An RNA of 177 nucleotides, treated with 2A3 and DMS and read out base by base.
RNA sequence: GGGAACGACUCGAGUAGAGUCGAAAAUCGAGGGUGACGUCGUCCAAGCCGACGGCGAGGGUGCGCAGCAGGUUCGCGAGCUGUGCGCGGUCGUCCGCGCCGAGGGAGGCGAGCAGGCGCUGUUCGAAUGGUAAAUGGGAUUCGUCCCAUUUACCAUAAAAGAAACAACAACAACAAC
Reactivity to 2A3 in 0.01 (KOAc 150mM, MgCl2 10mM, bicine 150mM(pH8.5), 24C), signal-to-noise 4, nucleotides 027 to 126: u100c020g010a040g030g030g040u110g070a050c020g010u010c000g020u030c030c020a110a040g080c070c050g030a040c000g010g010c010g010a040g030g050g030u090g000c050g000c020a050g030c000a010g050g080u090u090c030g010c030g050a050g040c040u050g030u070g040c010g010c000g020g000u100c100g130u070c010c010g000c030g000c000c010g030a090g020g040g000a040g080g040c020g000a010g010c010a010g050g030c010g000c040u030g040u070u080c040g060a060
Reactivity to DMS in 0.01 (KOAc 150mM, MgCl2 10mM, bicine 150mM(pH8.5), 24C), signal-to-noise 8, nucleotides 027 to 126: u010c060g000a080g000g010g010u000g000a130c050g010u000c020g010u010c020c060a100a160g020c180c090g000a050c040g010g000c030g000a100g000g000g020u000g010c080g020c040a060g010c020a110g000g000u000u010c070g010c050g010a300g000c020u000g010u000g020c000g000c010g000g010u000c200g000u000c010c030g010c020g010c010c040g010a120g000g000g000a200g010g010c030g000a050g010c030a060g000g020c060g020c020u000g010u000u010c060g010a120